[RMDB]
RNA sequence: GGGAACGACUCGAGUAGAGUCGAAAAUGUAAACCCUUGCAAAUUAGGAAAAUGAACAAUGCCAGAAUCGUCUGUUGUUUUUGUAAUGAGUUUAUCCCCGUUUAAUCCCAUCACAGAAACCUCUGCAUAUUAACCACAUGUUCGCAUGUGGUUAAUAAAAAGAAACAACAACAACAAC
Reactivity to DMS in 0.01 (KOAc 150mM, MgCl2 10mM, bicine 150mM(pH8.5), 24C), signal-to-noise 4, nucleotides 027 to 126: u010g020u010a050a080a100c020c020c010u000u000g010c030a040a070a070u010u000a080g010g000a050a060a110a100u000g020a050a060c110a060a070u010g010c050c070a060g000a100a110u000c090g010u000c080u010g010u010u000g010u000u000u000u010u010g010u000a040a050u000g000a060g000u000u000u000a080u010c040c010c000c020g030u000u000u000a090a110u000c000c010c000a040u010c130a040c090a070g000a050a130a090c180c110u000c030u010g010c130a170
Chemical mapping of a 177-nucleotide RNA with DMS. Values are in units of 0.01, from 0 to 300, in steps of 10.